[RMDB]
RNA sequence: GGGAACGACUCGAGUAGAGUCGAAAACAAAUGGUUAUCGAUUGGCUUUUUUAGAUCAGUGCAGCUCAAUGAAGCAAAUUCAUUACUGCUAUUCAUUUUCUUGAAAUUCUAUGGCCAAGUUAUAGAACACGAUCGAGUGAUUCGUCACUCGAUCGUGAAAAGAAACAACAACAACAAC
Reactivity to DMS in 0.01 (KOAc 150mM, MgCl2 10mM, bicine 150mM(pH8.5), 24C), signal-to-noise 1, nucleotides 027 to 126: c040a070a150a100u020g000g000u000u010a090u090c100g000a040u000u000g000g000c010u070u000u060u030u030u000a010g000a000u000c300a270g040u000g080c000a000g000c260u000c180a000a000u000g000a000a000g000c190a110a010a140u000u000c000a000u000u000a020c060u000g000c020u050a110u000u000c000a070u020u020u000u000c100u030u010g000a060a130a070u040u040c010u060a000u000g060g000c010c000a000a000g000u010u000a240u200a040g040a000a110
Reactivity to 2A3 in 0.01 (KOAc 150mM, MgCl2 10mM, bicine 150mM(pH8.5), 24C), signal-to-noise 2, nucleotides 027 to 126: c030a000a140a160u110g140g030u080u070a130u110c030g030a100u080u010g000g040c010u000u000u060u230u160u180a000g060a010u110c140a180g110u080g190c000a000g060c010u160c220a040a050u000g000a020a000g040c070a180a030a270u020u000c000a000u030u030a030c030u000g000c000u060a070u110u030c010a050u000u060u230u040c200u160u080g050a020a080a080u160u000c000u000a000u000g000g000c000c000a000a000g000u040u030a100u010a080g100a010a000

Structure probing data (DMS and 2A3) for a 177-nucleotide construct. It was measured as part of the RMDB library OK1LIB. The 2A3 profile rests on 687 reads. The DMS profile rests on 910 reads. The RNA was probed in 150 mM KOAc, 10 mM MgCl2 and 150 mM bicine (pH 8.5) at 24 C.